Source information: Source: RMDB library TTRDEL, as collected in RNAgym. The record gives the reactivity of an RNA of 177 nucleotides to DMS and 2A3. 2A3 is a SHAPE reagent: it acylates the 2'-hydroxyl of flexible nucleotides of all four kinds.

[RMDB]
RNA sequence: GGGAACGACUCGAGUAGAGUCGAAAAGAUAUGGAUUCAGGACAUGUCCGGAUUCGGAAACGAAUCCAGGACAACAGCCUGAUCCUAAGUCAAAAGUUAGAUGCGGGCUUCGGCCCGCAUCUAACAAGUAUUAGUUAACGUUCGCGUUAACUAAUACAAAAGAAACAACAACAACAAC
Reactivity to DMS in 0.01 (KOAc 150mM, MgCl2 10mM, bicine 150mM(pH8.5), 24C), signal-to-noise 4, nucleotides 027 to 126: g010a030u000a300u010g000g000a010u000u000c010a000g020g020a040c060a200u000g010u000c000c000g010g000a010u000u000c000g000g000a090a070a150c000g010a010a010u000c000c000a070g030g000a000c000a010a030c260a160g000c010c000u000g000a020u000c000c000u000a040a120g000u010c020a070a090a130a140g010u000u000a010g000a010u000g000c000g000g020g000c000u010u010c240g050g010c000c000c000g010c000a000u000c000u000a000a000c000a040a070
Reactivity to 2A3 in 0.01 (KOAc 150mM, MgCl2 10mM, bicine 150mM(pH8.5), 24C), signal-to-noise 2, nucleotides 027 to 126: g010a020u090a050u140g000g000a040u250u270c010a000g030g000a060c060a160u090g010u000c000c000g000g000a010u000u020c040g010g020a200a030a020c000g000a000a120u000c010c000a000g000g000a000c000a000a000c010a010g050c000c010u010g000a000u000c000c000u010a090a020g040u020c040a040a110a060a110g010u000u000a000g000a010u000g010c000g050g040g030c060u130u250c300g070g040c030c000c010g020c000a000u000c000u000a000a000c000a000a000